[RMDB]
RNA sequence: GGGAACGACUCGAGUAGAGUCGAAAAUUGUGUGGGAGGCUGGCAAGUCCAAACCACCACUCAAUCGUAAUUAUGUUUUUACUGGUUAUCAUAUAACCAAAAAUAGUAAAGUGCAGCUCGGUGAGUACAAUCAAAGGGGGUUCGCCCCCUUUGAUUGAAAAGAAACAACAACAACAAC
Reactivity to DMS in 0.01 (KOAc 150mM, MgCl2 10mM, bicine 150mM(pH8.5), 24C), signal-to-noise 2, nucleotides 027 to 126: u000u000g000u000g000u000g000g000g010a100g080g000c240u020g000g020c030a110a180g000u020c000c000a010a030a200c010c000a260c010c040a010c000u000c030a020a020u020c050g020u000a040a060u000u020a040u000g000u000u010u000u000u030a050c100u010g010g010u000u000a030u000c240a090u010a300u020a020a020c000c000a040a030a060a110a030u000a110g030u010a020a020a050g000u000g010c020a080g000c040u000c020g020g020u030g000a080g010u010a110
Source information
The record gives the reactivity of an RNA of 177 nucleotides to DMS. For DMS, 863 sequencing reads were counted. Source: RMDB library 15KREP, as collected in RNAgym.